[RMDB]
RNA sequence: GGGAACGACUCGAGUAGAGUCGAAAACUAAUUGAUCGAGGAUUUCUUUUGAUGAUGAAAGACCUAUGUGUGGCCCGAUUCAACACCCUAUUGGGUUUAACGCUAAGGGUUGACGACACGUUCAGCACAGCAGUGCUUCAUUCGUGAAGCACUGCUGAAAAGAAACAACAACAACAAC
Reactivity to DMS in 0.01 (KOAc 150mM, MgCl2 10mM, bicine 150mM(pH8.5), 24C), signal-to-noise 1, nucleotides 027 to 126: c000u000a040a090u030u070g000a080u000c230g000a110g000g000a160u000u000u020c020u020u050u000u010g040a090u000g000a060u000g000a000a140a060g030a010c000c030u000a140u040g000u000g040u000g000g000c000c050c000g000a090u020u000c180a000a080c020a060c030c010c000u070a050u000u020g000g060g010u000u000u050a040a040c070g070c060u000a130a130g000g000g030u010u000g000a140c050g000a010c070a040c090g000u000u000c160a060g000c220a130
Reactivity to 2A3 in 0.01 (KOAc 150mM, MgCl2 10mM, bicine 150mM(pH8.5), 24C), signal-to-noise 1, nucleotides 027 to 126: c020u030a060a170u100u180g150a120u180c120g090a210g100g010a100u000u030u190c130u070u110u140u150g110a150u040g060a050u060g040a170a050a020g010a030c000c010u020a060u180g020u010g000u010g000g000c040c020c000g010a010u040u050c050a130a060c000a140c030c020c010u030a100u050u080g030g000g010u000u020u120a120a000c040g000c000u010a010a060g000g000g000u000u020g010a040c010g050a070c030a000c100g090u110u120c050a050g080c010a000
The record gives the reactivity of an RNA of 177 nucleotides to DMS and 2A3. The reactions ran in a buffer of 150 mM KOAc, 10 mM MgCl2 and 150 mM bicine (pH 8.5), at 24 C.